Description:
An RNA of 177 nucleotides, treated with 2A3 and DMS and read out base by base. Values cover nucleotides 27 to 126. For DMS the reverse transcriptase was MarathonRT. The reactions ran in a buffer of 150 mM KOAc, 10 mM MgCl2 and 150 mM bicine (pH 8.5), at 24 C. The 2A3 profile rests on 13,942 reads.
[RMDB]
RNA sequence: GGGAACGACUCGAGUAGAGUCGAAAAAUUGGUGGCCUAGAAAUUCACGUGGUGUCAGAUUGUCUCAUUACGGUUUGAUCUACCUAGAUCUACAAAAUUGCGGGAGAAGAGACGCAGAGUUCUCAACAUACUCCGAUUUAUUCGUAAAUCGGAGUAUAAAAGAAACAACAACAACAAC
Reactivity to 2A3 in 0.01 (KOAc 150mM, MgCl2 10mM, bicine 150mM(pH8.5), 24C), signal-to-noise 9, nucleotides 027 to 126: a000u090u080g070g000u040g040g010c010c010u050a050g110a050a160a030u140u100c040a020c080g040u070g030g010u030g020u040c030a020g070a180u080u140g070u050c010u010c040a060u090u160a060c040g040g040u030u060u140g030a030u000c010u050a130c050c030u030a030g020a050u020c020u050a060c070a040a130a050a080u120u090g020c020g020g050g000a100g040a140a020g030a010g010a010c010g000c040a020g030a010g110u060u010c020u010c020a020a080c040
Reactivity to DMS in 0.01 (KOAc 150mM, MgCl2 10mM, bicine 150mM(pH8.5), 24C), signal-to-noise 7, nucleotides 027 to 126: a080u020u010g000g030u000g010g010c040c000u000a080g010a070a060a080u010u020c060a070c070g000u010g010g000u000g000u020c040a070g010a100u010u020g000u010c050u010c050a060u020u010a090c100g020g000u000u010u000g000a030u010c030u000a110c120c090u010a090g000a020u000c020u020a060c110a040a040a060a070u040u010g010c060g010g010g000a070g020a080a080g000a060g010a040c050g000c080a070g000a120g000u000u000c010u010c010a070a120c240